[RMDB]
RNA sequence: GGGAACGACUCGAGUAGAGUCGAAAAGGAUCGGAAACCGGCUCGCCACGCUUGAUCUGGUCGACAUUAUCCAUGCCUUCGAUGACCUGACCCCAGACGGUGUACUGGCGGUCGAGCCAUGGAGCAAUCGCUCCAUAAUCUUCGGAUUAUGGAGCGAAAAAGAAACAACAACAACAAC
Reactivity to 2A3 in 0.01 (KOAc 150mM, MgCl2 10mM, bicine 150mM(pH8.5), 24C), signal-to-noise 3, nucleotides 027 to 126: g030g000a030u050c030g020g030a060a130a060c030c020g020g000c040u060c060g100c030c040a070c040g000c000u070u180g010a060u040c010u030g000g040u010c020g020a050c030a100u130u150a050u110c030c030a030u050g060c010c000u050u040c020g120a060u050g050a060c010c010u020g020a010c010c000c000c020a010g010a040c090g200g110u180g000u180a120c020u010g040g010c100g020g040u020c010g000a010g000c000c010a010u040g020g010a010g030c020a030a070
Reactivity to DMS in 0.01 (KOAc 150mM, MgCl2 10mM, bicine 150mM(pH8.5), 24C), signal-to-noise 4, nucleotides 027 to 126: g000g010a030u000c040g010g000a070a130a120c110c060g010g010c010u000c110g000c060c080a060c120g000c060u000u010g020a120u000c050u000g010g020u000c040g000a110c120a060u020u010a080u000c040c020a090u000g020c090c050u000u000c020g000a060u000g000a040c000c020u010g000a020c010c000c000c010a010g020a080c040g010g030u010g010u010a090c010u010g000g000c200g030g010u000c010g020a020g000c070c000a050u020g010g000a030g010c090a110a090
Record summary
An RNA of 177 nucleotides, treated with 2A3 and DMS and read out base by base. For 2A3 the reverse transcriptase was SuperScript II with manganese. DMS adducts were read by reverse transcription with MarathonRT.